[RMDB]
RNA sequence: GGGAACGACUCGAGUAGAGUCGAAAAUUGGAAUUCUGAGUAUUUGGAUGGUUACACAGGCCAGCCCGUGUAUCUGGUCGAUGAUUGGAUGAUGAAGCGAGCAACUGCGCAGGACACGUCCAACGGUUUUUUGGAUCUGAUGACGUACUAUGGCAGUAAUUAUCAGCGAGUUCGCUCGCUGAUAAUUAAAAGAAACAACAACAACAAC
Reactivity to 2A3 in 0.01 (KOAc 150mM, MgCl2 10mM, bicine 150mM(pH8.5), 24C), signal-to-noise 2, nucleotides 027 to 156: u050u020g020g030a020a030u160u000c060u060g020a040g050u110a110u120u080u050g020g030a060u030g030g040u100u180a010c070a000c060a080g070g000c010c010a010g000c020c030c020g070u060g020u040a070u020c030u030g000g000u000c090g010a070u080g020a050u050u030g030g000a000u000g000a000u030g020a110a040g030c050g010a010g050c030a020a080c030u130g010c090g020c030a000g020g020a020c010a010c080g000u000c000c000a050a010c030g060g000u070u100u070u020u090u150g180g010a030u000c020u040g030a070u070g040a010c030g010u000a020c050u070a070u050g090g030c010a000g040u070
Reactivity to DMS in 0.01 (KOAc 150mM, MgCl2 10mM, bicine 150mM(pH8.5), 24C), signal-to-noise 1, nucleotides 027 to 156: u010u020g010g010a100a100u000u000c030u000g020a140g020u040a070u000u000u000g010g000a100u010g000g000u010u000a070c060a090c130a200g000g000c000c030a070g000c070c030c000g000u000g040u010a070u000c010u020g070g040u000c030g020a110u000g010a120u020u000g010g010a130u010g010a100u000g030a070a170g000c040g010a110g000c050a030a120c030u010g010c070g030c060a090g030g020a170c110a060c070g040u000c010c010a080a050c090g040g000u020u200u000u100u020u010g030g010a050u000c040u020g000a160u010g010a040c000g020u000a050c080u000a140u010g010g040c000a080g020u000
Structure probing data (2A3 and DMS) for a 207-nucleotide construct. The DMS profile rests on 2,237 reads. It was measured as part of the RMDB library OK3TST. The 2A3 profile rests on 990 reads. The RNA was probed in 150 mM KOAc, 10 mM MgCl2 and 150 mM bicine (pH 8.5) at 24 C. DMS adducts were read by reverse transcription with MarathonRT.